Structure probing data (DMS) for a 177-nucleotide construct.
Source: RMDB library OK2TST, as collected in RNAgym.
Reactivities are given for positions 27 through 126.
The reactions ran in a buffer of 150 mM KOAc, 10 mM MgCl2 and 150 mM bicine (pH 8.5), at 24 C.
Values are in units of 0.01, from 0 to 300, in steps of 10.
For DMS the reverse transcriptase was MarathonRT.
[RMDB]
RNA sequence: GGGAACGACUCGAGUAGAGUCGAAAAGCUGGGAGUCUGGGGAGGCUGAGGUGUGAGGUGACAGCAGGUGAAGAGUGAGCCACAAUCAGCAUUUUCACAUGAAAGGAAACUACAGGCCUGGGCGCAGGAAAUGUGCCUUGUUCGCAAGGCACAUUUCAAAAGAAACAACAACAACAAC
Reactivity to DMS in 0.01 (KOAc 150mM, MgCl2 10mM, bicine 150mM(pH8.5), 24C), signal-to-noise 1, nucleotides 027 to 126: g020c040u000g030g000g000a090g040u000c090u020g020g010g120g000a150g050g000c060u000g010a080g020g000u010g010u000g020a080g030g000u000g010a070c100a080g010c090a040g000g010u000g000a050a020g000a100g000u000g020a120g020c030c070a060c090a050a090u000c090a030g050c040a110u000u020u000u000c030a050c060a100u000g000a100a080a130g020g020a050a030a030c090u000a080c040a080g000g040c060c010u000g000g000g000c070g020c080a050g000